[RMDB]
RNA sequence: GGGAACGACUCGAGUAGAGUCGAAAAGCGGCCGCCGCGCAGCGCUCGGGGGAAAUGUUGCAGCCGCAGCCGCCCACCCCGGAGGCCGUCGCGUCACCUGCGCAGCCGUCCCCCACGCUGGUGUCCAAAUGUAAUGAUCCUUCGGGAUCAUUACAUUAAAAGAAACAACAACAACAAC
Reactivity to 2A3 in 0.01 (KOAc 150mM, MgCl2 10mM, bicine 150mM(pH8.5), 24C), signal-to-noise 1, nucleotides 027 to 126: g020c000g020g000c070c030g070c060c020g040c020g000c040a000g020c000g030c090u220c220g000g000g000g030g020a040a060a110u070g000u070u160g010c020a020g070c060c110g000c010a010g000c000c000g030c020c010c000a080c010c030c000c030g060g060a070g010g040c030c030g110u110c050g000c010g050u060c040a090c030c000u020g000c020g000c030a030g040c030c020g090u060c000c000c000c010c000a010c020g030c030u060g000g040u040g040u040c000c000a070
Reactivity to DMS in 0.01 (KOAc 150mM, MgCl2 10mM, bicine 150mM(pH8.5), 24C), signal-to-noise 3, nucleotides 027 to 126: g000c030g010g010c040c070g010c030c080g020c030g020c000a020g020c050g030c090u010c120g000g000g000g020g010a070a130a090u010g020u010u010g010c000a100g040c060c140g020c030a060g020c020c070g010c040c010c060a160c060c020c020c050g000g010a120g000g010c030c090g000u020c060g020c030g010u000c070a090c230c030u020g000c030g010c030a050g000c050c120g000u000c020c010c000c020c010a070c050g010c030u000g000g010u000g010u000c040c030a060